[RMDB]
An RNA of 177 nucleotides, treated with 2A3 and DMS and read out base by base.
The 2A3 profile rests on 3,637 reads.
The RNA was probed in 150 mM KOAc, 10 mM MgCl2 and 150 mM bicine (pH 8.5) at 24 C.
RNA sequence: GGGAACGACUCGAGUAGAGUCGAAAAAUAGCAGUGGUUGCCACCGAGAUGAUAGCUUUAUCAGCAACUCUGCUUUGCAAUGACUUCACAGCAAGGUUACCAAGAAGCAGAUGGGCUAUGAAGGAGAUCCAAGAAUUCAGUUCGCUGAAUUCUUGGAAAAAGAAACAACAACAACAAC
Reactivity to 2A3 in 0.01 (KOAc 150mM, MgCl2 10mM, bicine 150mM(pH8.5), 24C), signal-to-noise 5, nucleotides 027 to 126: a000u170a020g020c070a030g020u050g090g000u130u080g030c060c040a070c020c040g110a140g060a120u170g040a060u100a050g030c030u070u110u070a040u080c070a010g000c010a000a080c020u010c000u010g010c010u000u010u020g010c010a050a050u040g020a010c000u050u040c120a090c050a160g060c050a030a100g040g050u050u030a020c040c030a070a020g040a020a000g000c000a000g020a090u080g000g070g000c000u020a020u080g040a010a020g070g030a110g010a050
Reactivity to DMS in 0.01 (KOAc 150mM, MgCl2 10mM, bicine 150mM(pH8.5), 24C), signal-to-noise 5, nucleotides 027 to 126: a090u020a050g000c060a040g020u010g000g020u000u000g010c000c050a140c120c100g020a100g010a090u000g000a110u010a070g020c070u030u010u000a030u010c070a060g020c010a030a030c020u000c000u010g010c010u000u000u020g000c170a150a120u010g010a040c010u000u000c060a100c150a110g000c110a120a060g000g000u000u000a070c030c020a130a270g000a020a030g010c020a020g010a030u030g000g000g000c010u010a060u010g010a030a050g000g000a080g000a100